[RMDB]
RNA sequence: GGGAACGACUCGAGUAGAGUCGAAAAUAUCGAUCGAUCGGCCGUACUGAUCCGGUACGUACGGCCCAGUACUCGUACGCGCAGACGUACGCGCUCGGCCAGUACUGUGGAUCGCGGCGCAGCGCCAAGCGAUCCCAUGCUUCGGCAUGGGAUCGCUAAAAGAAACAACAACAACAAC
Reactivity to 2A3 in 0.01 (KOAc 150mM, MgCl2 10mM, bicine 150mM(pH8.5), 24C), signal-to-noise 1, nucleotides 027 to 126: u210a020u080c030g010a010u030c060g030a030u030c050g090g000c010c000g050u070a030c060u110g010a020u030c000c000g010g010u010a010c040g010u050a010c030g010g000c000c010c010a000g010u010a030c070u050c050g010u000a010c010g050c020g000c120a010g130a300c030g030u010a000c010g000c010g000c000u010c000g050g010c030c010a010g000u000a010c000u000g030u170g080g000a030u070c010g000c020g010g000c010g000c010a020g070c020g000c020c010a070
Reactivity to DMS in 0.01 (KOAc 150mM, MgCl2 10mM, bicine 150mM(pH8.5), 24C), signal-to-noise 3, nucleotides 027 to 126: u000a120u000c040g000a080u010c070g000a140u010c110g020g010c020c010g030u020a090c170u000g000a050u000c000c020g000g000u000a060c060g010u000a040c210g000g010c000c000c040a010g010u000a090c190u000c030g000u000a010c010g010c010g040c250a090g000a160c010g020u010a010c020g020c180g010c060u000c300g010g000c060c010a210g010u000a000c020u010g020u000g020g000a040u000c000g000c070g000g000c000g010c100a080g030c090g000c060c050a120